[RMDB]
RNA sequence: GGGAACGACUCGAGUAGAGUCGAAAAGUGCAUUCAUCAAUGCAGGUUAAGCCAAAGGGAUGUCCCGACCGGAGGCCGACAAUCCAGGGAACCGGAUGUCAUCACGUUGUCGCAGUACCAGAUGGCAAAAAGAUCCGCUCGUUCGCGAGCGGAUCAACUGUACAAAACUGUUCGCAGUUUUGUACAGAAAAGAAACAACAACAACAAC
Reactivity to DMS in 0.01 (KOAc 150mM, MgCl2 10mM, bicine 150mM(pH8.5), 24C), signal-to-noise 2, nucleotides 027 to 156: g030u000g000c000a040u010u000c130a150u000c100a030a030u000g020c020a110g030g060u010u000a100a060g010c030c020a050a300a300g040g010g020a080u000g000u000c030c020c010g010a090c030c010g030g020a300g000g010c000c030g000a070c050a050a120u010c010c010a070g000g020g030a160a060c020c000g020g020a060u010g000u010c030a180u000c040a060c180g020u010u010g020u000c010g010c040a090g010u000a070c060c010a120g010a130u000g020g000c050a050a050a110a060a150g000a050u000c020c000g020c000u000c010g010u010u000c300g000c030g000a030g020c000g000g000a000u010c000a020a020
Reactivity to 2A3 in 0.01 (KOAc 150mM, MgCl2 10mM, bicine 150mM(pH8.5), 24C), signal-to-noise 2, nucleotides 027 to 156: g160u020g020c000a010u020u160c030a050u090c050a100a050u070g000c040a030g120g050u150u200a070a040g010c000c030a020a010a010g040g000g020a080u020g060u040c010c000c000g030a010c000c000g000g000a000g040g000c020c000g040a010c000a070a070u030c030c030a010g000g020g070a040a030c030c020g000g030a020u020g030u020c000a000u000c010a020c110g060u120u120g030u050c050g010c130a040g020u100a090c040c000a020g010a070u060g010g060c040a010a030a030a080a100g000a000u000c000c000g000c000u000c010g060u070u080c170g000c000g160a000g000c000g000g000a000u000c000a000a000

This 207-nucleotide RNA was probed chemically with DMS and 2A3. It was measured as part of the RMDB library M2RFPK. For DMS, 3,017 sequencing reads were counted.